Background: Structure probing data (DMS and 2A3) for a 177-nucleotide construct. Reactivities are given for positions 27 through 126. For 2A3, 1,779 sequencing reads were counted. 2A3 adducts were read by reverse transcription with SuperScript II with manganese. DMS adducts were read by reverse transcription with MarathonRT. Source: RMDB library M2PK50, as collected in RNAgym.
RNA sequence: GGGAACGACUCGAGUAGAGUCGAAAAGCCGAAGAGUUCGCUCUUCGGCGACGAAUUUGGCGUAGAUGAGAGUCUAGAGUACUAGCCAUCCCAGAUGUACAAAUAAGCAUUGCUUCGGCAAUGCUAAGAUAAUGCGCGAGUUCGCUCGCGCAUUAUCAAAAGAAACAACAACAACAAC
Reactivity to DMS in 0.01 (KOAc 150mM, MgCl2 10mM, bicine 150mM(pH8.5), 24C), signal-to-noise 1, nucleotides 027 to 126: g020c010c010g010a000a040g020a020g020u020u010c230g000c010u010c010u000u000c010g000g000c000g010a000c090g000a160a150u000u030u000g000g000c010g030u010a020g020a000u010g000a210g020a220g020u000c000u000a020g020a180g000u000a040c000u000a020g020c010c000a100u010c000c000c010a210g000a020u000g010u000a030c050a040a050a060u030a140a070g020c010a000u000u000g000c000u000u030c170g010g000c010a010a000u000g000c000u000a020a110
Reactivity to 2A3 in 0.01 (KOAc 150mM, MgCl2 10mM, bicine 150mM(pH8.5), 24C), signal-to-noise 2, nucleotides 027 to 126: g000c010c000g020a000a010g010a010g040u050u140c160g030c120u000c050u000u000c010g010g160c000g010a000c020g070a060a180u100u090u150g000g000c020g000u010a000g000a040u050g020a020g000a010g080u000c000u020a010g010a030g110u000a010c020u020a010g000c000c010a060u030c020c000c010a000g010a090u090g030u010a010c040a020a150a100u170a140a000g000c000a000u000u010g000c030u010u110c260g000g030c010a000a000u000g030c000u010a000a000